[RMDB]
RNA sequence: GGGAACGACUCGAGUAGAGUCGAAAACAGAAAGCAGGUGUGACGCUGGAUUAUCCGCAACCGAUAGUCGAGCACAAAGAAGCGAGAGUACAAACGUUGGCAGCGUAUGAGGCGGCGCGGAAGGGGAGCAUAAGUGGUUGUUCGCAACCACUUAUGCAAAAGAAACAACAACAACAAC
Reactivity to 2A3 in 0.01 (KOAc 150mM, MgCl2 10mM, bicine 150mM(pH8.5), 24C), signal-to-noise 1, nucleotides 027 to 126: c010a030g060a070a090a000g010c020a000g000g050u050g030u040g080a050c070g030c030u030g000g040a040u060u000a030u000c010c030g050c100a050a080c050c020g010a020u020a010g030u030c060g060a010g000c030a030c020a040a080a010g070a050a000g030c030g030a030g020a000g070u050a050c020a030a110a010c040g040u050u020g040g000c020a020g000c000g010u000a040u150g040a060g000g040c000g000g000c080g000c020g030g000a050a040g020g020g000g010a030
Reactivity to DMS in 0.01 (KOAc 150mM, MgCl2 10mM, bicine 150mM(pH8.5), 24C), signal-to-noise 2, nucleotides 027 to 126: c090a090g010a070a080a080g020c010a040g030g020u030g010u000g030a080c130g050c030u010g000g000a050u000u000a040u000c010c110g000c090a090a060c110c180g000a040u000a020g010u000c020g010a060g000c020a130c100a060a050a090g020a160a070g010c040g000a060g000a060g000u020a040c170a020a130a090c150g000u000u010g000g010c000a060g000c050g020u010a040u010g000a050g010g030c070g000g020c100g000c070g000g010a080a040g000g000g000g010a170